[RMDB]
RNA sequence: GGGAACGACUCGAGUAGAGUCGAAAAGUAGAUAUGGACACUUUGGAGCACCUAGUACACCGAUGAAAGUUAUCGGAAACGAUAACUGGAGGUGGACCGGUGCUAUGAAGAAGUGUCCUAAGUCGAACAGCAAGAGAGAGUUCGCUCUCUCUUGCUGAAAAGAAACAACAACAACAAC
Reactivity to DMS in 0.01 (KOAc 150mM, MgCl2 10mM, bicine 150mM(pH8.5), 24C), signal-to-noise 1, nucleotides 027 to 126: g010u000a070g050a020u000a300u000g010g020a010c000a020c000u000u030u010g010g000a020g000c000a000c020c020u000a030g040u000a170c000a020c000c000g000a050u020g030a130a140a080g000u000u000a040u000c000g000g010a110a140a210c000g000a010u000a000a000c000u000g000g020a000g000g030u000g000g000a080c300c160g010g000u000g000c040u000a020u000g020a160a250g000a000a000g040u000g000u000c000c000u000a020a040g010u000c000g000a140a210